[RMDB]
RNA sequence: GGGAACGACUCGAGUAGAGUCGAAAAUUGAGAAUAUUCGCUCAACAAGGUUUAGAUGUUCUAAAAUACCCUUACUAUAGUUCAGCAAGUAAAACACUAGUUUUUGAUGAGAUGAUGUCUGUAUUACCCAUCCACAUUAGUUCGCUAAUGUGGAUGGAAAAGAAACAACAACAACAAC
Reactivity to 2A3 in 0.01 (KOAc 150mM, MgCl2 10mM, bicine 150mM(pH8.5), 24C), signal-to-noise 3, nucleotides 027 to 126: u050u060g020a030g030a030a030u040a130u100u140c070g000c030u050c050a020a090c010a050a100g040g000u070u120u090a020g040a070u070g020u060u020c040u120a090a060a070a020u160a080c000c020c000u030u060a070c050u070a030u130a120g040u050u110c030a030g050c040a030a100g040u080a080a040a050a030c040a050c050u060a060g040u030u040u030u070u100g080a090u040g000a050g040a100u090g020a020u050g030u030c030u040g090u060a100u020u080a040c000
Reactivity to DMS in 0.01 (KOAc 150mM, MgCl2 10mM, bicine 150mM(pH8.5), 24C), signal-to-noise 4, nucleotides 027 to 126: u000u010g030a060g010a060a090u010a090u000u000c090g020c010u010c040a040a080c150a070a110g010g000u000u010u010a080g030a110u010g000u000u000c040u000a050a070a060a080u010a110c060c050c020u020u010a040c100u010a070u020a090g000u000u000c120a040g000c060a030a050g030u000a060a050a020a040c050a070c110u010a060g010u010u000u000u000u000g010a070u000g010a070g010a060u000g010a050u000g000u010c040u010g010u000a090u020u010a120c150